[RMDB]
The record gives the reactivity of an RNA of 177 nucleotides to 2A3 and DMS. The reactions ran in a buffer of 150 mM KOAc, 10 mM MgCl2 and 150 mM bicine (pH 8.5), at 24 C. DMS adducts were read by reverse transcription with MarathonRT. The DMS profile rests on 4,177 reads. The data come from the RNA Mapping Database (RMDB), library TTRDEL. For 2A3, 5,870 sequencing reads were counted. For 2A3 the reverse transcriptase was SuperScript II with manganese.
RNA sequence: GGGAACGACUCGAGUAGAGUCGAAAAGAUAUGGAAUGAAGAAGCGAAGAACGUAGGGUGGGUCGGAAACGACAGCCCUACGGGAGCUUCCUUCAUUCCUAAGUCAAAACCCGGGUUCGCCCGGGAACAAUAGGCGUAUGUUCGCAUACGCCUAUUGAAAAGAAACAACAACAACAAC
Reactivity to 2A3 in 0.01 (KOAc 150mM, MgCl2 10mM, bicine 150mM(pH8.5), 24C), signal-to-noise 2, nucleotides 027 to 126: g010a000u060a020u190g010g000a010a000u000g000a010a020g010a000a000g000c030g100a230a030g000a130a030c010g000u010a000g030g020g040u090g190g300g000u010c010g000g020a080a090a030c000g000a000c000a000g000c020c000c000u000a000c000g000g020g000a000g010c000u000u030c060c010u000u010c000a000u000u000c000c000u000a030a000g030u000c000a020a040a070a240c000c000c020g010g020g000u070u060c240g100c020c000c010g000g000g000a020a000
Reactivity to DMS in 0.01 (KOAc 150mM, MgCl2 10mM, bicine 150mM(pH8.5), 24C), signal-to-noise 4, nucleotides 027 to 126: g010a030u000a300u000g000g000a010a000u000g010a000a020g000a040a010g020c000g010a080a160g000a120a150c010g010u000a000g010g000g030u000g020g020g010u000c010g010g010a100a070a150c010g000a000c000a300g000c000c000c000u000a000c000g010g000g000a050g010c000u000u000c150c030u000u000c000a010u000u000c000c000u000a020a050g010u010c010a150a070a090a100c000c000c000g010g000g020u000u010c140g000c000c010c000g000g000g020a010a010